[RMDB]
RNA sequence: GGGAACGACUCGAGUAGAGUCGAAAAGCUGCGUGAAACCUCGCUGUUUUCUUGGCUAACUUUCAGCGAGGUGAGGCAAGGCUGCAAAAAAAAGUUGGGAGCAGCAACGGCAAGCAAAAAAAAAGUUACAAGUUGCGAUGGUUCGCCAUCGCAACAAGUUGGAGCAAUGGUUCGCCAUUGCUCCAACAAAAGAAACAACAACAACAAC
Reactivity to 2A3 in 0.01 (KOAc 150mM, MgCl2 10mM, bicine 150mM(pH8.5), 24C), signal-to-noise 2, nucleotides 027 to 156: g000c010u040g020c040g100u070g030a040a080a010c010c000u000c000g010c000u000g000u000u000u040u000c090u160u240g150g010c110u010a000a000c000u010u000u010c010a000g000c000g010a010g000g020u000g000a000g000g040c040a000a030g100g000c020u000g000c040a000a020a080a080a060a000a020a000g230u260u120g040g060g030a100g000c010a000g030c020a040a030c030g060g000c010a010a070g080c060a050a020a040a070a000a000a000a000a000g000u000u000a010c000a030a060g010u000u000g000c020g000a000u000g010g020u010u030c050g020c130c000a000u000c000g000c000a000a000c000a000a000

Notes: An RNA of 207 nucleotides, treated with 2A3 and read out base by base. 2A3 is a SHAPE reagent: it acylates the 2'-hydroxyl of flexible nucleotides of all four kinds. The reactions ran in a buffer of 150 mM KOAc, 10 mM MgCl2 and 150 mM bicine (pH 8.5), at 24 C. Reactivities are given for positions 27 through 156. For 2A3, 1,037 sequencing reads were counted.